[RMDB]
RNA sequence: GGGAACGACUCGAGUAGAGUCGAAAAUGUCCACUGUUUUGGUGGAGGAGAUGCGUGCGUGUUUGACAAGACCACCAGAGCGGUGACAAGAUACGGCGAUGAGGACAUGUGCAUCUCUGAGUUGAGACUAGCCCUGGAUGUUCGCAUCCAGGGCUAGAAAAGAAACAACAACAACAAC
Reactivity to DMS in 0.01 (KOAc 150mM, MgCl2 10mM, bicine 150mM(pH8.5), 24C), signal-to-noise 1, nucleotides 027 to 126: u000g010u000c090c010a060c000u010g000u000u000u000u000g000g020u020g030g010a130g170g000a090g030a020u000g030c010g000u000g010c120g000u000g000u020u010u010g040a150c160a150a180g030a100c010c000a000c020c020a110g020a030g020c030g040g000u010g010a060c060a060a070g010a210u000a050c110g020g010c000g000a100u020g000a300g000g030a050c060a010u000g030u010g030c060a030u000c000u000c000u000g000a150g010u010u000g000a060g010a110